[RMDB]
RNA sequence: GGGAACGACUCGAGUAGAGUCGAAAAUGUUAAUGGGUGAUUUUCGGGUACCACAAUCGCGUGAUGCCAUCGGUAAUAAGGAAAUGCCGCGACAGAUUCAUCACUCAUCAGUACUUCAGUGGCAAUCGUACCUACCCCUGUUCGCAGGGGUAGGUACAAAAGAAACAACAACAACAAC
Reactivity to 2A3 in 0.01 (KOAc 150mM, MgCl2 10mM, bicine 150mM(pH8.5), 24C), signal-to-noise 1, nucleotides 027 to 126: u180g000u120u110a080a000u030g000g000g000u000g050a020u000u020u000u100c050g000g000g000u050a020c020c000a020c040a100a150u300c110g000c050g190u020g010a000u020g040c000c010a020u030c000g050g000u050a070a100u080a270a130g130g030a090a170a150u040g000c020c000g000c000g040a030c050a060g000a000u120u020c030a020u040c000a000c000u010c000a020u000c000a020g050u040a120c010u070u050c030a040g040u020g040g010c080a010a070u060c070
Reactivity to DMS in 0.01 (KOAc 150mM, MgCl2 10mM, bicine 150mM(pH8.5), 24C), signal-to-noise 1, nucleotides 027 to 126: u000g000u000u000a050a090u010g010g020g010u000g000a020u020u000u000u000c030g000g010g010u000a020c060c030a030c070a080a090u010c230g020c170g040u020g000a070u010g010c010c030a110u020c000g020g010u050a040a100u020a110a230g010g020a050a060a080u000g010c050c000g000c060g000a050c240a110g000a040u000u010c130a010u000c000a010c010u000c010a010u000c080a070g010u020a070c050u020u000c080a070g010u020g000g010c140a140a150u020c200